An RNA of 207 nucleotides, treated with DMS and 2A3 and read out base by base.
The 2A3 profile rests on 495 reads.
For DMS the reverse transcriptase was MarathonRT.
2A3 adducts were read by reverse transcription with SuperScript II with manganese.
Source: RMDB library OK3TST, as collected in RNAgym.
The DMS profile rests on 2,831 reads.
The RNA was probed in 150 mM KOAc, 10 mM MgCl2 and 150 mM bicine (pH 8.5) at 24 C.
[RMDB]
RNA sequence: GGGAACGACUCGAGUAGAGUCGAAAAUUUGUUCUGGAAUACGUGUAUGUGGGAAGUUGAAUCAUCAGACACUAGCUACAUAGACUAUGUUUACAGGGAUCCAGAGAGUCUGAAGACAUUUCUUAUGCCUUUAUAUAUUGGAGAACCCUUCCCCAUAAAUUAAUCGGUACUUCGGUACCGAUUAAUUAAAAGAAACAACAACAACAAC
Reactivity to DMS in 0.01 (KOAc 150mM, MgCl2 10mM, bicine 150mM(pH8.5), 24C), signal-to-noise 2, nucleotides 027 to 156: u000u010u020g000u010u010c040u010g020g030a150a090u000a090c100g020u000g000u000a030u000g010u000g000g020g000a090a080g010u010u000g010a140a130u010c100a100u010c110a200g000a110c060a060c030u000a070g010c000u010a050c040a080u000a080g030a020c050u000a060u010g000u000u000u000a120c040a060g000g000g020a120u000c000c040a110g020a120g030a190g020u000c060u000g000a010a030g010a020c020a020u000u000u000c160u010u000a050u000g020c010c000u000u000u000a080u020a130u000a150u030u000g010g010a200g010a070a190c080c020c040u000u000c000c000c000c030a030u000a090
Reactivity to 2A3 in 0.01 (KOAc 150mM, MgCl2 10mM, bicine 150mM(pH8.5), 24C), signal-to-noise 1, nucleotides 027 to 156: u120u030u160g060u030u090c060u080g070g050a120a090u090a090c050g000u010g090u020a010u000g080u160g000g030g060a020a080g010u100u150g120a150a110u140c060a070u050c030a090g040a050c020a000c030u020a060g040c000u070a020c030a070u110a010g080a120c010u030a050u200g030u090u100u000a030c040a010g000g000g030a030u000c010c000a020g030a000g010a050g080u000c060u120g040a000a000g010a060c060a120u120u230u020c070u110u120a020u090g020c000c000u020u110u010a090u030a070u040a020u000u130g040g010a080g060a220a180c110c000c070u030u010c000c000c000c000a020u080a030